[RMDB]
RNA sequence: GGGAACGACUCGAGUAGAGUCGAAAAGUUGUGCUACGGCACAACACUAGAGACGUGAGUCUCUAGAGGAGGUCGGUGACGACCUCCAAGAUAAUCGUGAGAUUAUCAAGUAGCUGCGUGAGCAGCUACAACCGCCUUCUUCGGAAGGCGGACCUCCUCGUACGCGAGGAGGAGAAGAUAACUUCGGUUAUCUUCAACACUGUCUACGGACAGUGAAUUAGAGUGUUCAAAGCCAGGCGUUUGCCGUGAAUACAUUAGCAUGGAAUAAGAUGUGCUUCGGCACAUCUAAAAGAAACAACAACAACAAC
Reactivity to 2A3 in 0.01 (KOAc 150mM, MgCl2 10mM, bicine 150mM(pH8.5), 24C), signal-to-noise 3, nucleotides 027 to 266: g000u010u010g000u020g000c010u020a040c260g080g000c000a000c010a000a000c000a010c000u010a010g000a000g000a000c000g110u130g080a070g030u020c000u000c010u010a000g010a040g000g000a010g000g000u000c020g010g060u090g060a030c000g000a000c000c000u000c000c000a000a000g000a000u010a000a000u010c020g020u040g060a130g000a050u020u010a000u010c030a000a070g000u010a000g000c000u000g010c020g050u080g070a070g000c000a000g000c000u000a000c000a000a050c000c000g000c000c010u010u010c000u020u040c110g140g010a000a000g000g000c000g000g010a000c000c000u000c000c000u000c000g030u040a020c230g010c000g160a000g000g000a000g000g000a030g000a000a000g000a010u000a000a000c010u060u060c190g060g000u000u000a000u000c000u010u020c020a020a000c000a000c000u000g010u000c010u020a030c240g120g000a000c000a000g000u010g010a000a010u100u080a060g080a060g120u050g010u040u060c060a100a060a070g070c120c150a130g090g040c150g110u190u300u300g040c010c010g000u010g000a020a050u070a050c030a070u150u150a030g120c060a050u130g100g120a140a060u220a230
Reactivity to DMS in 0.01 (KOAc 150mM, MgCl2 10mM, bicine 150mM(pH8.5), 24C), signal-to-noise 2, nucleotides 027 to 266: g030u030u000g040u000g010c010u000a070c200g010g020c000a010c010a010a030c010a230c020u000a020g000a000g020a000c000g000u040g000a200g000u000c000u000c000u000a000g010a210g040g040a020g010g000u000c000g000g020u010g000a100c000g010a010c010c010u000c030c020a010a080g020a010u010a000a000u000c000g000u050g000a140g000a030u000u000a000u000c020a170a190g000u000a000g010c000u000g000c010g000u020g010a260g050c000a000g010c000u000a000c000a110a210c000c010g000c000c000u000u000c000u020u030c200g020g000a030a000g010g000c000g000g000a030c000c000u010c010c020u000c000g020u020a130c160g060c020g010a010g000g010a010g000g000a080g000a030a010g000a010u000a010a010c000u000u000c190g000g000u000u000a010u000c020u000u010c000a160a220c010a010c000u010g000u000c010u020a160c220g010g000a010c010a010g010u000g010a040a050u030u020a140g000a100g010u000g020u010u000c040a060a070a090g000c130c140a120g030g020c050g020u010u020u030g030c040c040g020u000g000a070a020u020a060c020a150u000u000a070g000c140a060u000g000g000a080a040u000a090